Conditions: 150 mM KOAc, 10 mM MgCl2 and 150 mM bicine (pH 8.5), 24 C. An RNA of 207 nucleotides, treated with 2A3 and read out base by base. It was measured as part of the RMDB library OK3TST.
[RMDB]
RNA sequence: GGGAACGACUCGAGUAGAGUCGAAAAGCACUUUGGGAGGCCAAGGUGGGAGGAUCACUUGAGUCCAGGAGUUUGAGAGCAGUCUGGGCAACAUACUGAGACCCUGUCUCCACAAAAAAUAAAAUUAGCCAGGCAUGGUGACAUGUGCCUGUAGUCAUGCGAUUUACUAGUUCGCUAGUAAAUCGCAAAAAGAAACAACAACAACAAC
Reactivity to 2A3 in 0.01 (KOAc 150mM, MgCl2 10mM, bicine 150mM(pH8.5), 24C), signal-to-noise 1, nucleotides 027 to 156: g000c000a020c000u030u110u060g000g000g100a100g120g000c000c010a020a010g000g040u140g020g030g020a060g010g080a120u040c000a000c060u070u080g040a020g000u000c060c000a020g080g000a050g040u030u080u300g050a100g050a010g090c040a000g040u020c000u030g030g030g000c020a050a000c020a030u160a000c040u020g000a010g040a090c010c080c000u030g000u060c060u010c000c000a010c070a080a060a030a000a000a000u300a020a090a040a090u160u090a020g090c020c000a040g060g000c030a000u020g140g000u060g050a010c030a070u130g010u010g000c000c020u010g030u030a070g150u080c020a050